[RMDB]
RNA sequence: GGGAACGACUCGAGUAGAGUCGAAAAUUGAAUAUUUUAAUGCCACUUGUAAACAGAAGGGUGUUUACCUGACGGAAGAUGGCACGUCUUUUAAAACUCUUGUUUUGAAACCAGGUGACACAUUGGGAGUUCCUGUAUUUUUCGAAAUACAGGAACUAAAAGAAACAACAACAACAAC
Reactivity to 2A3 in 0.01 (KOAc 150mM, MgCl2 10mM, bicine 150mM(pH8.5), 24C), signal-to-noise 4, nucleotides 027 to 126: u080u070g040a080a040u140a150u160u140u100u160a120a060u070g010c000c000a010c020u080u120g100u260a100a110a050c050a060g120a120a060g140g040g020u030g080u020u010u050a040c000c000u010g020a010c000g020g040a050a050g100a170u030g030g000c030a010c010g010u020c000u020u040u000u040a030a030a010a020c040u070c070u180u180g050u050u040u010u030g030a020a020a010c010c010a010g000g040u010g010a000c000a000c020a050u040u120g070g030g030
Reactivity to DMS in 0.01 (KOAc 150mM, MgCl2 10mM, bicine 150mM(pH8.5), 24C), signal-to-noise 6, nucleotides 027 to 126: u000u010g010a150a100u010a080u000u010u010u010a060a150u000g010c020c000a040c050u000u010g010u000a070a080a170c100a080g010a100a090g010g000g010u000g000u000u000u000a020c040c020u010g000a090c040g010g000a080a080g000a100u000g010g030c050a060c030g000u000c020u010u000u000u000a020a020a030a020c010u000c160u000u010g010u000u000u000u000g000a030a070a080c300c080a050g000g020u000g000a030c030a030c060a130u010u000g000g000g020